[RMDB]
RNA sequence: GGGAACGACUCGAGUAGAGUCGAAAAUGUGUCCUAGGGAAUUGGAAGGUCAUCCUUCACAGGAUCGUGUUGAAGUCCUGCUCGGGGCGGAAGCAUUAAAACCAUUCGAGCUAGUCAAUGCGUGGCGUUACCUCCAGGUUCUUCGGAACCUGGAGAACAUACACUUCGUGUUCGCACGAAGUGUAUGAAAAGAAACAACAACAACAAC
Reactivity to 2A3 in 0.01 (KOAc 150mM, MgCl2 10mM, bicine 150mM(pH8.5), 24C), signal-to-noise 3, nucleotides 027 to 156: u130g050u000g020u020c010c020u060a130g000g040g030a060a150u150u130g040g030a080a020g030g070u200c050a140u180c040c000u070u110c050a030c020a060g030g030a080u080c060g010u040g020u030u020g020a050a020g050u080c000c030u010g030c020u020c040g000g000g020g000c100g030g020a070a010g020c060a020u140u210a080a070a020a070c040c010a000u070u080c030g010a010g020c020u070a030g070u050c060a040a040u050g040c040g060u050g090g000c030g030u060u090a070c020c000u000c000c000a000g000g020u000u000c000u030u050c120g060g000a000a000c000c000u000g000g000a000g000a000a000
Reactivity to DMS in 0.01 (KOAc 150mM, MgCl2 10mM, bicine 150mM(pH8.5), 24C), signal-to-noise 3, nucleotides 027 to 156: u000g020u020g010u000c020c010u000a080g020g030g030a100a100u000u010g020g010a040a090g040g010u000c100a160u000c020c020u000u000c080a110c020a130g000g010a030u000c030g020u000g020u000u000g010a110a170g010u010c020c020u000g000c050u010c050g020g020g020g000c050g000g020a130a080g020c110a170u010u000a060a140a140a080c020c010a120u000u000c050g000a060g000c010u000a080g000u000c030a040a070u010g010c040g010u000g020g010c060g000u000u010a090c090c010u000c000c020a030g010g010u000u000c000u000u010c300g070g030a010a010c010c010u000g000g000a000g020a010a030